The record gives the reactivity of an RNA of 177 nucleotides to DMS and 2A3. For DMS, 3,791 sequencing reads were counted. The reactions ran in a buffer of 150 mM KOAc, 10 mM MgCl2 and 150 mM bicine (pH 8.5), at 24 C. 2A3 adducts were read by reverse transcription with SuperScript II with manganese.
[RMDB]
RNA sequence: GGGAACGACUCGAGUAGAGUCGAAAACUCACAGCGCAGGCCACUGGCCGAUCGAUCAGUACGUCUGGCCAUGCGACGCGGCCUCUGCGCCGAUCCGUACACAGUACCAGGAUCGAUCGAUCGGUACUCUACUACGCAGGUUCGCCUGCGUAGUAGAAAAAGAAACAACAACAACAAC
Reactivity to DMS in 0.01 (KOAc 150mM, MgCl2 10mM, bicine 150mM(pH8.5), 24C), signal-to-noise 4, nucleotides 027 to 126: c020u000c020a160c160a160g010c030g030c040a060g010g000c030c070a080c220u000g000g000c010c010g000a000u000c010g000a020u010c030a150g000u010a070c190g020u000c050u000g010g020c090c060a100u010g020c020g010a080c060g000c050g000g000c000c020u020c140u010g010c110g020c000c000g000a060u010c130c020g000u000a030c090a080c150a080g010u000a030c020c050a070g000g010a050u000c050g000a020u000c010g000a000u000c010g000g020u000a060c150
Reactivity to 2A3 in 0.01 (KOAc 150mM, MgCl2 10mM, bicine 150mM(pH8.5), 24C), signal-to-noise 3, nucleotides 027 to 126: c010u030c010a070c050a030g080c020g010c050a010g010g060c030c030a110c150u130g090g000c000c000g000a000u000c000g010a010u010c020a050g070u140a070c070g060u020c050u030g000g000c000c030a110u090g020c030g070a050c070g030c010g050g000c020c010u210c080u210g110c190g000c020c000g000a020u060c050c010g010u040a040c160a010c000a130g060u070a080c030c040a060g040g040a040u050c030g000a010u010c020g000a020u010c000g030g000u030a040c020